Record summary: The record gives the reactivity of an RNA of 177 nucleotides to DMS and 2A3. Source: RMDB libraries RFM100 and RFMREP, as collected in RNAgym.

RNA sequence: GGGAACGACUCGAGUAGAGUCGAAAAUGGGCUUUCAUGGGAUACUACAUUGCUUGGGACUGGGAGAGGUAGGAGGUACUCGGGGGGUAGGGGUGAAAUCCUGUAAUCCUCCGGGGACCACCGGUGGCUGGAUAGGCAUAUUCGUAUGCCUAUCCAGAAAAGAAACAACAACAACAAC
Reactivity to DMS in 0.01 (KOAc 150mM, MgCl2 10mM, bicine 150mM(pH8.5), 24C), signal-to-noise 3, nucleotides 027 to 126: u030g010g000g000c060u010u020u010c120a100u010g000g000g000a140u030a060c090u030a080c110a060u010u020g010c120u000u010g010g000g000a140c140u010g000g000g010a110g000a070g000g000u030a090g000g010a040g010g020u000a020c000u000c020g000g000g000g010g000g020u000a060g000g000g000g000u010g000a090a060a100u060c010c000u000g000u040a020a020u010c000c000u010c000c010g000g010g000g010a040c010c010a070c040c030g010g020u020g000g000
Reactivity to 2A3 in 0.01 (KOAc 150mM, MgCl2 10mM, bicine 150mM(pH8.5), 24C), signal-to-noise 4, nucleotides 027 to 126: u030g020g000g000c050u090u160u170c100a080u090g010g030g070a030u020a130c030u050a050c040a110u090u200g060c060u070u050g020g010g030a080c050u050g010g010g010a080g010a020g070g020u040a020g020g030a030g010g010u000a010c000u000c000g000g000g000g000g000g000u010a020g000g030g000g000u030g080a020a010a000u090c000c000u030g020u060a080a010u010c000c010u000c000c000g000g010g000g000a020c010c010a010c000c010g020g010u040g070g020